[RMDB]
RNA sequence: GGGAACGACUCGAGUAGAGUCGAAAAGAACAUGCGUUCGCGCAUGUUCAAAUAUAAUCAGCGGUAAUCGAGGCGUAAAUAUUACCGCUGAACGCCUCGAUAAAAGAGCUGGCUUCGGCCAGCUCAACCCCUAUACAUUCUUCGGAAUGUAUAGGGGAAAAGAAACAACAACAACAAC
Reactivity to DMS in 0.01 (KOAc 150mM, MgCl2 10mM, bicine 150mM(pH8.5), 24C), signal-to-noise 2, nucleotides 027 to 126: g010a010a010c000a010u000g000c010g010u000u000c240g010c010g010c000a000u010g010u000u000c000a020a070a100u020a110u010a090a130u000c030a040g020c000g000g000u000a060a020u000c090g010a080g020g020c070g030u000a040a050a090u010a060u000u000a090c010c020g000c020u010g010a050a030c080g000c000c000u000c070g010a100u020a030a080a140a110g000a020g020c000u010g000g010c000u000u000c200g020g020c030c000a020g000c000u000c000a030a040
Reactivity to 2A3 in 0.01 (KOAc 150mM, MgCl2 10mM, bicine 150mM(pH8.5), 24C), signal-to-noise 3, nucleotides 027 to 126: g000a000a000c000a000u000g020c000g020u020u100c270g000c000g000c100a000u000g000u000u000c000a000a000a000u030a000u000a010a200u080c010a000g020c020g070g010u060a040a040u030c030g020a050g060g020c060g040u040a030a130a020u200a080u100u080a060c000c000g020c000u010g010a000a000c010g000c010c000u030c020g020a060u080a170a110a010a020g000a000g000c010u010g020g000c000u030u040c170g090g000c000c000a000g000c000u000c000a000a000
Record summary: Chemical mapping of a 177-nucleotide RNA with DMS and 2A3. DMS adducts were read by reverse transcription with MarathonRT. The reactions ran in a buffer of 150 mM KOAc, 10 mM MgCl2 and 150 mM bicine (pH 8.5), at 24 C.